[RMDB]
RNA sequence: GGGAACGACUCGAGUAGAGUCGAAAAGCCCUUUGGGUGGGGUUGCAGCCGUAGCGCAUCGCAAAGACGCCGAGGUCACCCACGCAACCCACAUCGCACGCUUGGUCACUCGGGGUCCGUGCUAGCGUGAAGUCCCCAUUUUCGAAUGGGGACUUCAAAAAGAAACAACAACAACAAC
Reactivity to 2A3 in 0.01 (KOAc 150mM, MgCl2 10mM, bicine 150mM(pH8.5), 24C), signal-to-noise 3, nucleotides 027 to 126: g040c000c000c000u010u090u050g090g000g000u020g000g020g000g000u030u020g010c000a000g010c000c030g130u200a070g010c010g000c060a060u040c010g020c090a090a120a040g070a020c010g010c010c030g030a020g000g020u070c120a110c020c050c000a000c030g000c010a010a040c000c070c020a030c000a050u100c020g030c050a050c010g040c030u070u100g040g010u180c020a050c090u000c030g010g000g040g000u030c020c020g030u050g000c000u020a030g030c000g070
Reactivity to DMS in 0.01 (KOAc 150mM, MgCl2 10mM, bicine 150mM(pH8.5), 24C), signal-to-noise 3, nucleotides 027 to 126: g000c000c010c020u000u030u010g010g020g020u010g020g020g030g010u000u000g010c000a180g020c060c040g000u010a120g010c080g010c020a090u020c100g020c100a120a120a050g000a070c050g020c000c010g000a140g000g010u020c120a100c030c030c010a140c140g000c040a020a040c000c000c000a100c060a030u010c030g000c060a100c100g000c070u000u000g020g010u010c060a050c030u040c040g000g040g010g020u020c040c040g010u010g010c030u000a140g010c050g000
Structure probing data (2A3 and DMS) for a 177-nucleotide construct. It was measured as part of the RMDB library RFM100. The reactions ran in a buffer of 150 mM KOAc, 10 mM MgCl2 and 150 mM bicine (pH 8.5), at 24 C.